Record summary
Conditions: 150 mM KOAc, 10 mM MgCl2 and 150 mM bicine (pH 8.5), 24 C. An RNA of 177 nucleotides, treated with 2A3 and DMS and read out base by base. For 2A3, 998 sequencing reads were counted. For DMS, 3,051 sequencing reads were counted.
RNA sequence: GGGAACGACUCGAGUAGAGUCGAAAACUUAACGCCUUACUUCAGGGCGAUGGUGCGGUAGUAUGUAAGCACUGGAUUGUCGAGACUGAACGUAUGCUCGAAGAUGCCGGGUAUGUCCACGGCUGGGCACGAAAGGUGACUUCGGUCACCUUUCGUGAAAAGAAACAACAACAACAAC
Reactivity to 2A3 in 0.01 (KOAc 150mM, MgCl2 10mM, bicine 150mM(pH8.5), 24C), signal-to-noise 3, nucleotides 027 to 126: c000u080u050a040a060c060g060c000c010u020u090a040c020u060u100c020a010g040g000g000c030g010a020u000g010g000u090g050c000g000g090u010a000g100u010a200u230g140u230a150a050g010c030a060c070u040g180g120a160u020u140g050u140c000g000a020g120a140c040u050g040a100a000c000g050u020a050u150g010c030u040c030g000a040a050g140a010u100g010c000c000g040g000g000u210a150u300g100u010c000c000a110c090g000g000c030u000g050g000g000
Reactivity to DMS in 0.01 (KOAc 150mM, MgCl2 10mM, bicine 150mM(pH8.5), 24C), signal-to-noise 2, nucleotides 027 to 126: c070u010u020a050a170c160g030c100c000u000u030a040c060u010u040c060a040g000g020g000c000g010a050u060g000g040u010g000c010g020g020u010a070g020u020a040u050g030u030a090a080g010c050a000c010u000g010g000a040u000u020g000u020c000g010a150g010a040c030u010g000a040a040c290g010u010a020u020g000c020u010c030g030a070a050g010a070u030g000c070c000g020g000g010u010a110u050g000u000c050c040a060c010g020g000c010u020g000g000g000